[RMDB]
RNA sequence: GGGAACGACUCGAGUAGAGUCGAAAAGCAGUAUACUGCUACUUGUGUGAGAAUACUUUUAGUACAAGCGAGUACACGCAGUAUACUGCCACUUGUGUGAGAAUACUUUUAGUACAAGCGAGUACACGGGGAGGAUGAAGUUCGCUUCAUCCUCCCCAAAAGAAACAACAACAACAAC
Reactivity to 2A3 in 0.01 (KOAc 150mM, MgCl2 10mM, bicine 150mM(pH8.5), 24C), signal-to-noise 1, nucleotides 027 to 126: g000c000a000g000u000a000u000a000c000u000g010c000u000a000c000u000u000g000u000g000u060g190a280g030a000a170u050a060c080u000u210u300u280a210g000u040a060c060a060a060g000c030g000a000g010u000a000c040a000c030g040c000a000g000u000a000u000a080c000u000g000c000c010a000c000u130u250g000u000g000u040g070a000g100a130a000u000a160c000u050u060u210u210a080g000u000a050c120a030a030g120c000g080a000g000u040a000c130a060c130

An RNA of 177 nucleotides, treated with 2A3 and read out base by base. Conditions: 150 mM KOAc, 10 mM MgCl2 and 150 mM bicine (pH 8.5), 24 C. 2A3 adducts were read by reverse transcription with SuperScript II with manganese. Source: RMDB library OK1LIB, as collected in RNAgym.